[RMDB]
RNA sequence: GGGAACGACUCGAGUAGAGUCGAAAAUAACGAUCCUUGGAAACCUAUAAGUGCCGAGAACACUCGCACUGACUUCGCUCUCGCUGCCUGAUCAGUGAUCGAAGGGUCAGCCCGGAUGUAGCCUUCCGUCCGGAUCCUGGCCUCGUUUAGAAGGCUUACAGCUAUAUAGCUUCGGCUAUAUAGCUGUAAAAGAAACAACAACAACAAC
Reactivity to 2A3 in 0.01 (KOAc 150mM, MgCl2 10mM, bicine 150mM(pH8.5), 24C), signal-to-noise 2, nucleotides 027 to 156: u120a050a000c030g030a030u060c020c010u100u060g090g060a130a100a120c080c040u150a190u040a280a060g000u030g160c270c150g060a030g000a160a100c300a120c130u000c000g000c000a010c020u020g030a040c000u000u000c000g010c000u000c000u000c000g020c010u020g020c110c100u190g020a240u250c000a000g010u000g000a050u300c010g000a000a000g030g000g000u000c000a000g000c000c000c000g000g000a000u000g020u020a000g000c010c000u000u000c000c000g000u000c000c000g000g030a060u090c040c040u000g010g000c000c000u050c010g000u000u030u050a030g000a030a000g000g000c000u000u010
Source information
An RNA of 207 nucleotides, treated with 2A3 and read out base by base. The RNA was probed in 150 mM KOAc, 10 mM MgCl2 and 150 mM bicine (pH 8.5) at 24 C. Reactivities are given for positions 27 through 156. For 2A3, 1,007 sequencing reads were counted. Source: RMDB library ARCHII, as collected in RNAgym.